[RMDB]
RNA sequence: GGGAACGACUCGAGUAGAGUCGAAAAGAUAUGGAAGUGGAACUACUUGGGGCUAUUGAAGGGUCGAAGAACUUUAUCGGAAACGAUAAAGGGAGACCCUGAUAGCCCCAAGCCACUUCCUAAGUCAGUAAAGAAUUGUGUUCGCACAAUUCUUUACAAAAGAAACAACAACAACAAC
Reactivity to DMS in 0.01 (KOAc 150mM, MgCl2 10mM, bicine 150mM(pH8.5), 24C), signal-to-noise 1, nucleotides 027 to 126: g010a040u000a300u000g000g020a000a020g040u010g010g000a130a010c050u000a300c000u010u000g020g010g010g000c010u000a030u000u000g000a110a000g030g010g000u000c040g010a070a220g000a170a130c000u000u000u000a000u010c000g000g000a130a170a270c010g010a010u000a000a000a000g000g000g000a060g000a000c000c000c000u010g010a010u000a000g020c000c000c000c000a000a000g000c000c000a020c000u000u000c010c000u000a000a040g000u000c030a090
The record gives the reactivity of an RNA of 177 nucleotides to DMS.
Conditions: 150 mM KOAc, 10 mM MgCl2 and 150 mM bicine (pH 8.5), 24 C.
The data come from the RNA Mapping Database (RMDB), library TTRINS.